RNA sequence: GGGAACGACUCGAGUAGAGUCGAAAAAUUGAACAAGAUGACGGUAUGUGUGCGGUAUUUUUCUUAGAUAAGGAUCACAUCCCAUUCUUGAAGCAACUUGUUAAGGACUUAGAGGAGGUAACAAAGUAAUGACAGAAAAGUAUGAGCGACACAUCAAGUGUCAGGGAAUUUUCGAAUUCCCUGACACAAAAGAAACAACAACAACAAC
Reactivity to 2A3 in 0.01 (KOAc 150mM, MgCl2 10mM, bicine 150mM(pH8.5), 24C), signal-to-noise 3, nucleotides 027 to 156: a000u080u070g010a040a000c020a060a030g040a060u050g050a000c090g010g050u130a020u010g040u020g040u050g000c100g010g030u070a080u010u080u000u010u000c060u050u110a050g010a070u070a110a040g020g000a040u060c010a010c010a050u000c020c000c000a020u050u020c000u030u000g020a040a000g020c000a000a050c020u010u020g020u040u070a060a050g060g000a030c020u030u060a040g010a010g120g020a000g040g040u040a030a000c020a030a060a000g030u050a030a060u060g040a010c020a050g040a030a040a020a000g040u050a020u080g030a030g050c040g050a010c010a000c000a060u100c030a090a070
Reactivity to DMS in 0.01 (KOAc 150mM, MgCl2 10mM, bicine 150mM(pH8.5), 24C), signal-to-noise 2, nucleotides 027 to 156: a100u000u000g000a090a200c020a120a080g000a170u000g010a140c060g000g000u000a050u000g010u000g010u000g000c030g050g030u000a020u000u000u000u000u000c060u000u000a190g020a090u000a070a060g010g030a120u000c060a000c010a300u000c000c000c000a110u000u010c030u000u000g010a110a140g030c020a040a080c050u000u010g020u000u000a050a140g020g030a110c030u000u000a100g020a090g010g020a070g020g000u000a050a070c040a000a010a120g010u000a060a050u000g000a130c100a050g030a030a080a050a050g020u000a040u010g000a070g030c000g030a020c040a030c060a100u000c050a080a280